Chemical mapping of a 177-nucleotide RNA with DMS. The data come from the RNA Mapping Database (RMDB), library VIROID. The RNA was probed in 150 mM KOAc, 10 mM MgCl2 and 150 mM bicine (pH 8.5) at 24 C.
RNA sequence: GGGAACGACUCGAGUAGAGUCGAAAACUCACUCUUCGAGGUCCGCGUUCCAUCCUUUCUUACCUGAUGGCCGGCAUGGUCCCAGCCUCCUCGCUGGCGCCGGCUGGGCAACAUUCCGAGGGGACCGCUAAGUGUAGAGGUUCGCCUCUACACUUAGAAAAGAAACAACAACAACAAC
Reactivity to DMS in 0.01 (KOAc 150mM, MgCl2 10mM, bicine 150mM(pH8.5), 24C), signal-to-noise 2, nucleotides 027 to 126: c090u010c010a100c090u010c050u010u000c020g020a070g010g010u010c080c130g030c010g010u010u000c000c020a200u010c040c040u000u010u010c030u000u020a090c080c050u000g010a080u000g000g010c050c010g000g000c020a070u000g030g020u000c220c000c010a020g010c000c060u020c070c050u000c120g010c050u000g000g010c180g010c010c020g000g020c010u000g000g000g000c030a040a020c080a080u000u000c040c040g000a080g010g020g000g010a070c140c090g010